RNA sequence: GGGAACGACUCGAGUAGAGUCGAAAAUUUUGUUCAUACCAGUGGAAUGACAGGUGUAUUAAGAGACUCUGCCAUGAACAAACUUACAUUGUAGAGAGCAUAUCAAAUAAUUACCUUGUCAUAAUGGUUGACAGUAUACAAGGUAGCCAAAUACAUGAUCCUCAGAUUACUUCGGUAAUCUGAGGAUAAAAGAAACAACAACAACAAC
Reactivity to 2A3 in 0.01 (KOAc 150mM, MgCl2 10mM, bicine 150mM(pH8.5), 24C), signal-to-noise 3, nucleotides 027 to 156: u080u040u030u040g020u060u060c040a030u080a270c020c020a070g060u150g100g100a200a030u020g000a010c010a020g000g010u060g020u080a050u040u020a110a040g020a030g000a060c000u010c000u010g040c000c010a000u030g040a110a090c080a130a060a060c100u090u140a030c040a020u010u000g020u050a000g020a000g020a010g060c040a030u060a040u250c020a040a000a160u070a020a020u010u040a020c000c000u050u230g030u010c000a000u000a010a040u060g020g010u010u100g020a000c010a000g110u140a060u060a170c110a060a090g080g000u030a020g080c040c010a020a100a040u200a070c080a040u220g050
Reactivity to DMS in 0.01 (KOAc 150mM, MgCl2 10mM, bicine 150mM(pH8.5), 24C), signal-to-noise 1, nucleotides 027 to 156: u000u000u000u000g010u020u010c030a060u010a080c100c040a070g050u020g050g000a230a060u000g010a020c030a010g000g000u010g010u000a080u000u000a110a040g010a300g020a010c030u000c040u000g010c040c000a000u000g000a160a300c020a020a060a050c290u000u000a110c080a080u000u000g020u000a120g020a080g020a090g030c060a100u010a110u030c000a050a070a190u000a050a060u000u000a000c010c010u000u010g000u030c060a030u010a070a080u010g000g020u000u000g010a090c000a080g020u000a080u000a060c020a020a060g000g010u010a080g000c060c030a030a100a100u000a090c050a100u010g010